[RMDB]
RNA sequence: GGGAACGACUCGAGUAGAGUCGAAAAAGCUCCAGUUACGACUGGAGCAACGGGAUGAGGAGUUCAGCCUAGGCUGAGGCGUGAUGAGGGAGUGACGGACUGACCAGCGUCCUCUACGGAGGACGCAUGUAAGAGCAGUCUUCGGACUGCUCUUACAAAAAGAAACAACAACAACAAC
Reactivity to DMS in 0.01 (KOAc 150mM, MgCl2 10mM, bicine 150mM(pH8.5), 24C), signal-to-noise 3, nucleotides 027 to 126: a070g000c000u000c000c000a000g020u010u010a130c220g030a040c000u000g000g000a010g010c010a010a020c110g010g010g000a110u020g000a130g000g000a110g010u020u000c050a050g000c000c030u020a170g030g000c020u020g000a030g010g030c070g000u020g020a070u030g020a100g000g030g010a040g040u000g000a130c100g000g000a060c060u020g000a090c100c080a140g020c010g010u000c010c000u000c000u000a130c070g030g010a040g000g000a000c010g050c000a000
Reactivity to 2A3 in 0.01 (KOAc 150mM, MgCl2 10mM, bicine 150mM(pH8.5), 24C), signal-to-noise 3, nucleotides 027 to 126: a000g000c000u000c000c000a010g000u010u100a110c290g010a010c070u010g000g000a000g030c000a000a020c030g040g020g000a050u090g050a080g050g010a040g030u070u090c000a020g010c010c030u070a070g120g000c010u040g040a010g050g040c040g040u100g010a120u080g040a090g020g000g010a050g040u080g020a030c010g030g000a020c040u050g040a060c020c060a030g000c000g000u000c020c010u000c000u010a060c230g050g000a000g000g000a000c000g020c000a000